[RMDB]
RNA sequence: GGGAACGACUCGAGUAGAGUCGAAAAGACUGCGAUCAAUGCCUCACCUGGAAAGAGUUCCAGGAUAUGUACCACAGAUGCAGAAAUGAUCAGACAGGGUACGAGCCUCAUCGCCUGUUCAAUGUCGUAGUAGAUGCGGAUUCGUCCGCAUCUACUAAAAAGAAACAACAACAACAAC
Reactivity to 2A3 in 0.01 (KOAc 150mM, MgCl2 10mM, bicine 150mM(pH8.5), 24C), signal-to-noise 2, nucleotides 027 to 126: g050a020c020u010g020c060g080a050u070c040a110a060u080g040c020c000u010c000a030c000c010u000g000g080a060a070a040g300a150g260u060u000c000c000a000g020g000a010u030a040u090g040u020a040c000c060a050c020a090g030a040u100g080c010a020g060a050a130a060u120g020a090u070c000a040g060a070c020a010g000g030g070u130a090c020g030a000g050c010c060u100c040a070u020c020g010c040c000u050g040u060u090c060a070a100u100g070u110c040g020
Reactivity to DMS in 0.01 (KOAc 150mM, MgCl2 10mM, bicine 150mM(pH8.5), 24C), signal-to-noise 3, nucleotides 027 to 126: g020a090c050u000g010c050g000a030u000c060a120a150u000g010c090c050u000c090a160c020c000u000g030g010a010a080a240g020a180g010u000u000c020c000a010g000g010a100u000a010u010g020u000a050c070c080a110c180a070g000a100u010g020c020a060g000a060a080a130u010g000a090u000c070a110g010a080c120a100g000g000g010u010a120c090g000a060g020c080c030u000c170a080u000c030g010c010c060u000g030u000u000c090a060a090u000g020u000c030g000